About this RNA
The record gives the reactivity of an RNA of 207 nucleotides to 2A3 and DMS. Conditions: 150 mM KOAc, 10 mM MgCl2 and 150 mM bicine (pH 8.5), 24 C. The data come from the RNA Mapping Database (RMDB), library OK3TST. Values cover nucleotides 27 to 156. The 2A3 profile rests on 976 reads.
RNA sequence: GGGAACGACUCGAGUAGAGUCGAAAAAAGUUCUUGCUGAGGGGGUAACGUACCUUCACCAACUACAUCGUCGUCGAGUACGUGAUAGAAAUAGUAACGGAACCUGAUAAAUACCGAUUCUGAACGCCGAGUUUUGGCCUUCAGGUAGAGGAAUCGCGAAAUGUACGCAGUUCGCUGCGUACAUUUCAAAAGAAACAACAACAACAAC
Reactivity to 2A3 in 0.01 (KOAc 150mM, MgCl2 10mM, bicine 150mM(pH8.5), 24C), signal-to-noise 2, nucleotides 027 to 156: a000a000g040u000u000c030u040u050g070c020u020g030a100g000g010g000g020g000u000a020a030c010g000u020a010c010c000u000u030c030a050c060c010a030a040c030u270a070c060a150u120c090g060u040c010g010u030c030g040a070g040u010a050c030g030u040g000a030u070a170g060a050a110a020u170a020g060u050a110a070c060g000g060a030a020c000c030u090g040a090u030a150a140a030u150a070c010c010g000a020u020u030c000u010g000a040a020c010g050c020c010g060a100g000u040u080u090u290g060g000c000c000u000u000c010a030g010g010u040a010g020a000g060g020a060a040u100c030g000c030
Reactivity to DMS in 0.01 (KOAc 150mM, MgCl2 10mM, bicine 150mM(pH8.5), 24C), signal-to-noise 1, nucleotides 027 to 156: a060a080g000u010u010c000u010u000g010c040u020g020a100g030g020g020g020g010u000a130a100c180g000u000a080c020c010u000u000c020a030c040c080a000a070c040u020a030c070a190u010c040g040u000c030g000u000c040g050a160g000u000a040c040g000u010g000a110u010a100g000a110a080a100u000a100g040u010a080a100c080g000g000a070a030c000c000u000g020a090u060a030a070a100u030a050c040c000g000a130u000u000c010u000g040a000a050c070g000c040c000g020a230g000u010u020u000u000g020g000c020c050u030u000c000a030g010g090u000a060g000a210g000g010a140a120u010c040g010c300